RNA sequence: GGGAACGACUCGAGUAGAGUCGAAAAAGGCGUAAAUGUCAUAGUUAUCACUCAUAAACAGCACCACCUGUCUGGAGGGUCGAGGAGCAGCCUCGUCCCAAGCCUCGAUAACUCCAAACAUGGUCAAGGCAUGACUCAGAGGCGGACAAUUGCGCUCGGUACACAUCUGGUUCGCCAGAUGUGUACCAAAAGAAACAACAACAACAAC
Reactivity to 2A3 in 0.01 (KOAc 150mM, MgCl2 10mM, bicine 150mM(pH8.5), 24C), signal-to-noise 2, nucleotides 027 to 156: a000g010g020c000g000u000a080a000a000u050g030u020c000a060u110a110g030u070u110a190u230c030a070c030u030c000a080u170a110a200a040c060a070g000c020a020c030c050a010c010c000u000g000u000c020u010g000g000a000g030g000g020u010c000g000a010g000g000a040g030c050a030g020c040c040u040c040g080u100c000c000c030a020a010g020c020c000u000c000g050a020u050a220a240c000u000c000c000a010a010a000c030a040u200g020g000u020c040a060a000g030g000c040a030u060g030a070c010u060c130a030g010a000g020g020c000g030g010a000c000a010a010u010u020g000c000g000c000u020c040
Source: RMDB library OK3TST, as collected in RNAgym.
Structure probing data (2A3) for a 207-nucleotide construct.
Reactivities are rounded to 0.1 and cut off at 0 and 3.